[RMDB]
RNA sequence: GGGAACGACUCGAGUAGAGUCGAAAAGUAAAGAAGAAAACGUGCGCAAGAAAAGAAUGGUGGUAUAAACUGCCGAGAAUAACUAAUGGACGGCAGAGCCCACGAACCACCAAAGAACAGAAAAAAACCCUUAAUUACGUUUCGACGUAAUUAAGGGAAAAGAAACAACAACAACAAC
Reactivity to DMS in 0.01 (KOAc 150mM, MgCl2 10mM, bicine 150mM(pH8.5), 24C), signal-to-noise 3, nucleotides 027 to 126: g040u000a090a090a110g020a100a110g000a040a030a100a100c100g000u000g030c090g030c090a060a050g050a070a040a080a130g000a110a120u000g010g020u000g000g000u000a110u000a070a060a080c010u000g000c000c000g010a070g020a050a100u000a040a170c260u000a070a080u010g000g000a100c010g000g010c020a010g020a070g010c030c030c000a100c210g020a080a020c000c010a020c020c010a010a050a070g020a050a070c140a040g030a000a010a030a100a140a140a060
Reactivity to 2A3 in 0.01 (KOAc 150mM, MgCl2 10mM, bicine 150mM(pH8.5), 24C), signal-to-noise 1, nucleotides 027 to 126: g060u120a000a050a100g100a100a000g020a020a210a030a130c040g090u050g060c130g000c060a130a070g000a090a160a000a000g030a060a020u070g000g000u000g030g010u030a010u060a100a020a040c000u000g000c000c010g020a050g050a130a060u280a050a000c070u070a200a230u090g150g030a000c030g000g000c030a000g000a010g030c000c010c000a000c060g000a000a000c000c000a010c040c000a010a020a000g030a000a000c060a000g260a050a070a010a010a040a010a000
An RNA of 177 nucleotides, treated with DMS and 2A3 and read out base by base.
The RNA was probed in 150 mM KOAc, 10 mM MgCl2 and 150 mM bicine (pH 8.5) at 24 C.
DMS adducts were read by reverse transcription with MarathonRT.
The 2A3 profile rests on 793 reads.
Values cover nucleotides 27 to 126.
It was measured as part of the RMDB library M2PK90.